[RMDB]
RNA sequence: GGGAACGACUCGAGUAGAGUCGAAAAAGCAGGAACAAUAUGUCCAUUGGGCAGAUGUCCGGGAAAGUUAUAAGGGCCAAAAACCGCCAAUACGCCAUGUGGCCGGUGCCGCAGCACUGAGAUAGCGUACCCCUCAUUAGUUCGCUAAUGAGGGGUAAAAAGAAACAACAACAACAAC
Reactivity to DMS in 0.01 (KOAc 150mM, MgCl2 10mM, bicine 150mM(pH8.5), 24C), signal-to-noise 3, nucleotides 027 to 126: a110g000c060a070g010g010a080a050c030a080a070u000a120u010g000u010c010c020a150u000u030g050g030g010c020a070g000a110u000g000u010c020c020g010g000g000a050a070a080g010u000u010a110u030a110a090g010g000g010c030c060a050a030a040a100a110c080c020g020c010c030a060a100u020a060c120g020c030c040a100u000g020u020g010g010c030c040g020g000u010g010c040c200g000c120a070g000c020a030c030u000g000a110g000a100u000a080g000c080g020
Reactivity to 2A3 in 0.01 (KOAc 150mM, MgCl2 10mM, bicine 150mM(pH8.5), 24C), signal-to-noise 2, nucleotides 027 to 126: a010g110c060a050g020g030a040a020c010a040a110u100a160u190g030u000c020c000a180u190u290g000g010g000c000a000g040a180u060g050u050c000c000g000g030g000a070a150a020g000u070u050a110u100a210a060g030g000g000c050c000a050a010a020a130a060c010c000g020c000c000a030a060u100a040c010g050c000c020a090u150g100u160g240g040c040c060g000g020u040g030c020c040g060c060a050g030c030a020c050u020g000a020g000a180u100a020g020c040g010

An RNA of 177 nucleotides, treated with DMS and 2A3 and read out base by base. For 2A3, 1,022 sequencing reads were counted. For DMS the reverse transcriptase was MarathonRT. Conditions: 150 mM KOAc, 10 mM MgCl2 and 150 mM bicine (pH 8.5), 24 C. For 2A3 the reverse transcriptase was SuperScript II with manganese. Reactivities are given for positions 27 through 126.